[RMDB]
RNA sequence: GGGAACGACUCGAGUAGAGUCGAAAAAGCUGUGAGUGAAUGGCAGCUCUGGGUCUGACAGGCUGGGGUCAGACUGCCAUGGGGCAGACACAGCUGAUUUUCCAGCUCAGUCCCUGAUAAUCACAUAACCACAAGGCUACUGCCACCCAGUGUGCACGCCCUGCUGUAAGUUCGCUUACAGCAGGGCAAAAGAAACAACAACAACAAC
Reactivity to 2A3 in 0.01 (KOAc 150mM, MgCl2 10mM, bicine 150mM(pH8.5), 24C), signal-to-noise 2, nucleotides 027 to 156: a000g040c030u030g010u060g030a030g060u120g070a130a030u080g030g050c070a030g000c100u030c030u010g040g000g000u020c010u050g040a140c020a130g070g110c000u000g000g010g000g060u000c010a030g010a220c040u010g010c000c010a120u300g140g080g080g050c000a000g000a030c050a000c010a110g030c060u020g000a000u030u060u070u100c000c000a020g000c000u090c070a020g010u050c000c010c030u000g050a060u200a120a070u130c020a010c000a080u160a130a050c080c020a130c110a170a060g080g020c000u120a010c010u150g030c020c000a020c040c010c000a030g010u030g020u040g140c080a040c130

An RNA of 207 nucleotides, treated with 2A3 and read out base by base. Reactivities are given for positions 27 through 156. Source: RMDB library OK3TST, as collected in RNAgym.